An RNA of 207 nucleotides, treated with 2A3 and DMS and read out base by base. The reactions ran in a buffer of 150 mM KOAc, 10 mM MgCl2 and 150 mM bicine (pH 8.5), at 24 C. 2A3 adducts were read by reverse transcription with SuperScript II with manganese. For DMS the reverse transcriptase was MarathonRT. 2A3 is a SHAPE reagent: it acylates the 2'-hydroxyl of flexible nucleotides of all four kinds. The data come from the RNA Mapping Database (RMDB), library M2RFPK.
RNA sequence: GGGAACGACUCGAGUAGAGUCGAAAAGAUCUGCGCCGAUCCGAAACGCUAGCAAACAGCCCGCAUCAUGUCGUCUCCUAACUUCGACGUGGUGAAAUACUCAGCUUAUGCGAGUAAGCCUGUUAGCAAUAGAUCAGAACGUUCGCGUUCUGAUCAAUCUAUACAUUACGUUCGCGUAAUGUAUAGAAAAAGAAACAACAACAACAAC
Reactivity to 2A3 in 0.01 (KOAc 150mM, MgCl2 10mM, bicine 150mM(pH8.5), 24C), signal-to-noise 9, nucleotides 027 to 156: g010a040u010c020u090g050c060g030c060c050g020a030u030c030c040g060a050a050a020c070g000c030u020a010g000c010a060a040a100c010a050g050c010c010c020g020c010a010u000c000a000u010g010u000c000g030u010c040u090c090c090u130a160a170c070u060u040c010g000a000c000g000u000g000g000u010g010a050a010a000u040a010c010u020c020a060g020c030u210u260a080u300g030c020g000a010g020u020a030a010g040c010c030u020g010u030u030a010g000c020a050a120u080a180g000a000u000c000a000g000a000a000c000g010u050u060c200g020c010g080u000u010c020u000g000a000u000c000a000a000
Reactivity to DMS in 0.01 (KOAc 150mM, MgCl2 10mM, bicine 150mM(pH8.5), 24C), signal-to-noise 4, nucleotides 027 to 156: g000a060u000c030u000g000c080g040c040c030g000a070u000c040c030g010a100a080a100c080g000c030u000a040g000c010a050a060a060c060a290g020c010c010c030g010c030a050u000c030a040u000g010u000c000g010u020c080u010c100c060u010a120a060c050u010u000c020g020a030c000g040u000g020g000u000g010a060a060a080u000a060c030u000c040a090g010c030u000u000a060u010g030c110g010a110g010u000a040a060g020c040c060u000g010u000u000a090g020c040a110a160u010a100g000a010u000c000a000g000a020a000c000g030u000u010c300g020c000g030u000u000c000u010g000a000u000c000a030a040